The record gives the reactivity of an RNA of 177 nucleotides to DMS and 2A3. For 2A3, 3,882 sequencing reads were counted.
[RMDB]
RNA sequence: GGGAACGACUCGAGUAGAGUCGAAAAGCGCUAGCUAGCGCGCAUGCGCGCAUAUCGAUUAUAGCGCCGCGAUAUGCGCUAAUCGUAGCCGAUUAGCGCUAGCUAAUGCAUCGCGCGCGAUCGUACGUCAGUGUUAGCUGUUCGCAGCUAACACUGAAAAAGAAACAACAACAACAAC
Reactivity to DMS in 0.01 (KOAc 150mM, MgCl2 10mM, bicine 150mM(pH8.5), 24C), signal-to-noise 4, nucleotides 027 to 126: g010c010g000c050u000a000g010c010u000a020g010c000g020c020g010c180a050u000g030c120g000c050g000c020a040u000a010u000c020g010a070u000u020a130u010a130g030c020g020c020c230g000c040g010a010u000a020u000g000c000g020c000u000a010a010u000c000g010u010a200g020c290c040g000a030u000u010a100g000c000g010c020u000a000g000c010u000a020a040u000g000c020a080u010c080g030c090g010c010g020c020g010a070u010c150g010u010a080c220g010
Reactivity to 2A3 in 0.01 (KOAc 150mM, MgCl2 10mM, bicine 150mM(pH8.5), 24C), signal-to-noise 3, nucleotides 027 to 126: g000c000g010c030u010a010g000c000u010a010g030c010g000c010g010c060a060u300g070c010g000c020g020c050a020u010a020u070c000g030a050u050u090a140u250a220g010c030g010c010c010g010c000g010a020u010a020u080g010c020g010c010u010a000a010u000c010g060u090a040g140c130c030g000a010u010u000a010g000c010g000c010u010a020g010c000u030a040a010u090g010c010a070u090c070g040c010g000c010g000c020g120a060u120c060g030u120a100c040g060